[RMDB]
RNA sequence: GGGAACGACUCGAGUAGAGUCGAAAAGUACGCGGAUACGUCCGCGUACAAUAAAAUCAGCGGUAAAUAAUUAGCUCCGGUUACCGCUGAACCGGAGCAUAAAGCCAGUCAUUACGAUGACUGGCAACCGGCUUUUAAUAUUCGUAUUAAAAGCCGGAAAAGAAACAACAACAACAAC
Reactivity to DMS in 0.01 (KOAc 150mM, MgCl2 10mM, bicine 150mM(pH8.5), 24C), signal-to-noise 1, nucleotides 027 to 126: g020u000a000c000g020c010g000g010a030u010a040c220g060u000c000c010g060c000g030u010a000c000a070a040u030a020a090a060a050u000c010a000g000c000g010g010u020a070a050a040u020a030a070u000u010a080g030c000u000c000c000g000g000u000u010a050c030c000g000c000u000g000a000a000c000c010g000g000a000g020c000a080u020a020a110a070g000c000c000a000g000u000c000a010u000u020a090c110g000a020u020g000a000c010u000g010g000c030a010a000
Reactivity to 2A3 in 0.01 (KOAc 150mM, MgCl2 10mM, bicine 150mM(pH8.5), 24C), signal-to-noise 6, nucleotides 027 to 126: g000u000a000c000g000c010g010g000a020u020a070c180g120u010c000c000g000c000g010u000a000c000a000a010u010a010a010a000a050u040c010a010g000c020g120g200u220a090a130a050u110a030a120u140u140a070g000c000u000c000c000g000g020u010u030a180c010c000g000c000u000g000a010a000c020c000g000g010a000g000c000a000u180a020a100a000g000c000c000a000g000u000c000a010u020u100a060c270g130a030u020g000a000c000u000g010g000c000a000a000

Background: Conditions: 150 mM KOAc, 10 mM MgCl2 and 150 mM bicine (pH 8.5), 24 C. Structure probing data (DMS and 2A3) for a 177-nucleotide construct. Reactivities are given for positions 27 through 126. 2A3 adducts were read by reverse transcription with SuperScript II with manganese. The DMS profile rests on 3,055 reads. The 2A3 profile rests on 5,938 reads. Source: RMDB library OK1LIB, as collected in RNAgym.